[RMDB]
RNA sequence: GGGAACGACUCGAGUAGAGUCGAAAAGGAUCCUAUCUCGAGGUAACUGGGUCUAGAUCAGUUACCUGUGAGUAGGUAUUCACUAUGUGUCAAUGAUCUAGACGUUGACGUAUAACAGAUAGGAUCGCUACAGCAAUCUAUUCGUAGAUUGCUGUAGAAAAGAAACAACAACAACAAC
Reactivity to 2A3 in 0.01 (KOAc 150mM, MgCl2 10mM, bicine 150mM(pH8.5), 24C), signal-to-noise 5, nucleotides 027 to 126: g040g000a000u000c000c000u000a000u010c040u040c060g050a030g000g070u010a020a020c010u020g040g000g120u070c100u150a080g030a230u060c000a010g010u020u010a000c000c000u000g000u000g010a010g020u060a130g110g170u110a070u030u030c000a000c010u050a040u070g050u010g010u010c020a010a030u030g020a150u050c060u160a060g040a180c060g080u010u020g010a010c010g010u030a010u010a060a020c020a000g010a000u000a000g000g000a000u010c000g000
Reactivity to DMS in 0.01 (KOAc 150mM, MgCl2 10mM, bicine 150mM(pH8.5), 24C), signal-to-noise 8, nucleotides 027 to 126: g010g010a010u000c000c000u000a000u000c000u000c090g030a060g010g010u000a020a030c010u000g010g000g010u000c140u010a090g000a060u010c000a020g000u000u000a010c000c010u000g010u000g000a050g020u000a100g010g010u000a030u000u000c020a010c010u000a040u000g010u000g010u000c060a040a040u000g010a090u000c120u010a090g000a080c020g020u000u000g000a060c080g010u000a020u000a040a170c190a010g000a010u000a010g010g000a020u000c000g010
Overview: Structure probing data (2A3 and DMS) for a 177-nucleotide construct. Conditions: 150 mM KOAc, 10 mM MgCl2 and 150 mM bicine (pH 8.5), 24 C.